The record gives the reactivity of an RNA of 207 nucleotides to 2A3 and DMS.
DMS adducts were read by reverse transcription with MarathonRT.
The DMS profile rests on 2,570 reads.
It was measured as part of the RMDB library OK3TST.
The 2A3 profile rests on 1,061 reads.
RNA sequence: GGGAACGACUCGAGUAGAGUCGAAAAAACUACUUUGGAUGCGGUCAAGGCCUAUCAGCACAUUAAACGCAUAAUACAACUGUUAAGAAGCCAUCGAGAUGAUCCUGAUAGUAUAACGGAUGAAGUAUUAAGAGAUGCAACAGUCGUUGCAGAGACACGGAUUAAAUCGUUUCGACGAUUUAAUCCGAAAAGAAACAACAACAACAAC
Reactivity to 2A3 in 0.01 (KOAc 150mM, MgCl2 10mM, bicine 150mM(pH8.5), 24C), signal-to-noise 2, nucleotides 027 to 156: a000a000c050u090a020c010u090u040u030g040g010a070u060g050c050g000g000u040c020a060a070g030g000c000c030u040a060u050c020a000g050c000a010c000a050u080u120a090a160a030c050g010c010a030u100a070a030u140a160c080a110a110c040u030g010u120u070a100a060g040a090a000g040c020c010a000u020c070g030a000g010a100u050g000a010u010c000c000u010g030a050u070a070g060u070a110u040a120a030c050g000g000a000u030g020a070a010g000u080a060u100u060a050a010g030a000g000a060u020g030c000a020a020c010a050g250u140c050g000u070u040g000c000a010g040a000g010a060c060a030
Reactivity to DMS in 0.01 (KOAc 150mM, MgCl2 10mM, bicine 150mM(pH8.5), 24C), signal-to-noise 2, nucleotides 027 to 156: a060a070c000u010a050c060u000u010u020g000g030a080u000g060c100g010g040u010c040a060a070g000g120c050c000u000a100u010c090a010g000c020a060c100a070u000u010a070a030a090c100g010c120a100u010a060a110u010a070c040a070a120c060u010g000u010u000a090a130g000a070a100g010c030c010a030u010c060g030a100g050a140u010g020a080u010c020c000u020g000a080u000a030g040u020a100u000a060a130c020g000g040a090u000g010a030a130g030u000a050u000u020a070a130g000a120g060a090u010g010c010a030a090c020a100g020u000c030g000u000u000g000c030a080g020a140g010a100c060a140